[RMDB]
RNA sequence: GGGAACGACUCGAGUAGAGUCGAAAAGAAAGAAAUCGAGAGACUAGCAAUAUCCGUAAAAGCGGAUUCUAUUAGAUCGAAUAACUCGUUCUUGAUCUAACUGAGGGAUGAGUGUCUAAUCGAGAAAGGGUAACUAUGUCUUCGGACAUAGUUACCCAAAAGAAACAACAACAACAAC
Reactivity to DMS in 0.01 (KOAc 150mM, MgCl2 10mM, bicine 150mM(pH8.5), 24C), signal-to-noise 2, nucleotides 027 to 126: g000a100a130a040g000a040a070a030u000c050g010a050g020a130g010a010c020u040a080g040c160a140a180u000a050u020c000c000g000u000a080a080a140a100g000c020g010g000a000u000u000c010u000a080u040u000a000g000a030u000c000g030a030a120u010a060a050c070u000c080g000u030u000c000u000u030g000a000u030c040u000a000a010c280u010g000a100g000g000g030a120u050g000a020g000u020g000u000c000u000a020a080u000c030g000a050g000a060a100a080
Reactivity to 2A3 in 0.01 (KOAc 150mM, MgCl2 10mM, bicine 150mM(pH8.5), 24C), signal-to-noise 1, nucleotides 027 to 126: g100a000a040a020g050a000a020a050u040c000g000a000g000a000g000a100c030u050a040g000c040a010a030u000a070u170c000c000g000u000a000a110a000a000g220c000g010g000a000u050u000c000u010a010u020u040a040g020a080u040c030g000a010a110u190a190a150c070u000c040g020u000u040c090u010u100g130a040u010c000u000a000a130c020u130g060a080g000g150g000a020u040g020a010g020u030g000u000c010u000a130a000u070c000g000a000g080a070a050a000